[RMDB]
RNA sequence: GGGAACGACUCGAGUAGAGUCGAAAAACGGUCGUACGCGACCGAGGCGCGGCUAGGUCGACGGACCGAACAAUGGCAUCCCGCAUUCUGCCAUCCGCAGCGCAGCUUCUUCUCAAACGGUGCGGAAAAAAGUAGGACACCUUCGGGUGUCCUACAACCUAAUCUAUGAGUUCGCUCAUAGAUUAGGAAAAGAAACAACAACAACAAC
Reactivity to DMS in 0.01 (KOAc 150mM, MgCl2 10mM, bicine 150mM(pH8.5), 24C), signal-to-noise 2, nucleotides 027 to 156: a070c030g010g000u000c000g030u000a110c210g040c020g000a020c010c000g010a030g020g010c070g020c040g020g000c000u000a080g010g040u010c000g000a170c230g010g100a030c000c010g040a150a020c210a130a030u010g010g040c040a080u000c040c000c020g000c050a110u000u050c070u020g030c000c010a090u000c030c060g040c050a050g000c030g060c040a080g050c060u000u000c080u000u000c070u010c050a160a130a100c080g020g010u000g000c100g000g020a000a040a050a110a100a120g010u000a020g010g020a030c020a000c000c000u000u000c300g010g010g030u010g000u000c000c000u000a000c010a010a100
Reactivity to 2A3 in 0.01 (KOAc 150mM, MgCl2 10mM, bicine 150mM(pH8.5), 24C), signal-to-noise 4, nucleotides 027 to 156: a000c010g000g000u000c000g030u060a040c250g000c010g150a000c000c010g010a070g000g010c010g000c010g000g030c000u010a010g000g000u010c030g090a160c190g160g000a000c010c000g000a010a020c030a010a010u010g000g000c000a030u110c040c020c000g000c010a020u300u070c010u040g000c020c000a020u010c020c020g010c020a020g010c040g000c010a040g030c050u120u030c010u080u010c040u080c040a070a110a060c060g010g000u000g000c000g000g000a060a010a030a050a020a020g010u010a000g010g000a000c010a000c010c010u030u080c200g070g000g000u000g000u000c000c000u000a000c000a000a000
The data come from the RNA Mapping Database (RMDB), library M2RFPK. The record gives the reactivity of an RNA of 207 nucleotides to DMS and 2A3. DMS adducts were read by reverse transcription with MarathonRT. High 2A3 reactivity points to a flexible backbone, as in loops and unpaired stretches. The DMS profile rests on 3,640 reads. Reactivities are given for positions 27 through 156.